[RMDB]
The data come from the RNA Mapping Database (RMDB), library M2PK90. An RNA of 177 nucleotides, treated with DMS and 2A3 and read out base by base. The 2A3 profile rests on 4,386 reads. For DMS the reverse transcriptase was MarathonRT. The reactions ran in a buffer of 150 mM KOAc, 10 mM MgCl2 and 150 mM bicine (pH 8.5), at 24 C. For DMS, 3,556 sequencing reads were counted.
RNA sequence: GGGAACGACUCGAGUAGAGUCGAAAAGUACACCCUCCCUCCCUCCCAUAAGCGCGCAAAUAAAGGGAGGGACUCAGGGAUGAGUAGGCCAAAAGGCCAUAUCCCGAAGACGCGCGACGGGACAAAAAUUAGGAAACGUAUUCGUACGUUUCCUAAUAAAAGAAACAACAACAACAAC
Reactivity to DMS in 0.01 (KOAc 150mM, MgCl2 10mM, bicine 150mM(pH8.5), 24C), signal-to-noise 4, nucleotides 027 to 126: g010u010a140c190a130c000c010c020u000c010c000c010u000c010c010c010u000c010c000c030a150u010a100a140g000c010g010c010g020c120a050a100a100u000a050a080a110g000g000g010a040g010g000g010a020c060u000c140a050g020g010g010a050u000g010a060g020u000a130g010g020c000c010a070a050a070a160g010g010c000c000a090u010a060u000c010c000c010g020a150a120g000a130c050g000c000g010c020g000a150c130g000g000g000a090c180a030a040a050a070
Reactivity to 2A3 in 0.01 (KOAc 150mM, MgCl2 10mM, bicine 150mM(pH8.5), 24C), signal-to-noise 3, nucleotides 027 to 126: g030u040a030c010a110c090c000c000u020c000c020c000u000c020c010c000u050c000c000c000a060u070a140a060g010c010g000c010g000c040a090a090a070u180a130a170a010g000g000g000a010g010g000g000a000c000u010c060a030g000g030g010a010u080g010a010g160u300a120g000g010c020c020a120a300a170a240g020g000c010c000a020u040a040u050c000c010c000g010a070a020g080a020c030g020c010g000c000g030a010c020g020g010g010a000c050a000a160a020a010